[RMDB]
RNA sequence: GGGAACGACUCGAGUAGAGUCGAAAAGCAACUCGGCUUCCAGCGCGCCCGCACCGAGGAAAACAAGCGCCAACGUGCGGCGGCGCUGGUGGAAGCCGCGCGGUCGCUGGCGCUGGAGACGGGCGUGACUUGGCUCUCGAUUCGUCGAGAGCCAAGUAAAAGAAACAACAACAACAAC
Reactivity to 2A3 in 0.01 (KOAc 150mM, MgCl2 10mM, bicine 150mM(pH8.5), 24C), signal-to-noise 1, nucleotides 027 to 126: g080c070a050a030c020u000c040g040g000c090u120u010c050c020a020g080c010g000c000g000c000c000c000g000c030a100c010c060g030a030g050g040a060a170a000a000c100a110a060g000c060g010c010c000a100a050c100g190u140g000c010g000g000c040g150g000c000g000c010u040g000g000u040g010g070a110a040g000c000c000g000c000g000c000g100g000u020c000g010c030u040g000g020c020g050c010u010g050g020a090g000a020c010g000g020g020c000g000u000g050
Reactivity to DMS in 0.01 (KOAc 150mM, MgCl2 10mM, bicine 150mM(pH8.5), 24C), signal-to-noise 2, nucleotides 027 to 126: g000c000a080a130c000u000c030g000g000c130u000u070c000c010a220g000c000g010c000g030c000c000c000g000c060a100c090c000g000a120g000g000a030a030a250a230c100a140a000g000c030g010c040c000a080a130c300g040u070g000c000g000g000c140g010g010c000g070c020u040g050g000u000g030g060a050a100g010c000c000g040c020g000c030g000g040u000c020g010c000u040g000g010c070g060c020u030g000g000a050g000a230c000g000g000g010c000g010u050g030
Chemical mapping of a 177-nucleotide RNA with 2A3 and DMS. Source: RMDB library OK1LIB, as collected in RNAgym. For 2A3, 826 sequencing reads were counted. The RNA was probed in 150 mM KOAc, 10 mM MgCl2 and 150 mM bicine (pH 8.5) at 24 C. For 2A3 the reverse transcriptase was SuperScript II with manganese. For DMS, 1,925 sequencing reads were counted. Values cover nucleotides 27 to 126. As a SHAPE reagent, 2A3 marks flexible, mostly unpaired nucleotides at the ribose 2'-OH.